[RMDB]
RNA sequence: GGGAACGACUCGAGUAGAGUCGAAAACUGGGUCCCUCGGAUGUCGAUCCCCUCUCCCGUUCGGGAAAAGGGGGACUCCGGGACUCCCUGCAGGCUGGGCACGAAGCCCCCACCGGGCGCUCCCCUCAAGCAUUACACUUCGGUGUAAUGAAAAGAAACAACAACAACAAC
Reactivity to 2A3 in 0.01 (KOAc 150mM, MgCl2 10mM, bicine 150mM(pH8.5), 24C), signal-to-noise 9, nucleotides 027 to 129: c040u040g020g000g010u030c010c030c010u010c070g030g000a110u250g030u040c050g080a240u180c010c000c010c000u010c010u020c000c010c010g150u300u300c260g000g000g000a020a040a020a020g010g000g000g000g000a000c000u000c000c000g000g000g000a010c030u030c000c000c000u030g000c030a050g040g000c030u070g020g020g000c050a030c190g090a090a030g020c000c000c000c000c000a070c030c030g010g020g000c020g000c010u010c000c000c000c000u050c030a040a030g040
Reactivity to DMS in 0.01 (KOAc 150mM, MgCl2 10mM, bicine 150mM(pH8.5), 24C), signal-to-noise 9, nucleotides 027 to 129: c100u010g010g000g000u010c010c040c040u050c090g030g010a050u100g040u000c040g020a140u080c000c010c010c010u000c160u000c010c000c020g060u100u100c210g020g000g020a020a020a080a070g000g010g030g010g000a020c000u020c000c000g000g000g000a070c060u030c000c060c040u000g000c090a120g010g010c210u040g020g010g000c020a070c130g030a130a100g030c010c020c010c030c000a040c120c050g000g010g030c060g020c050u000c020c020c020c040u000c090a120a100g000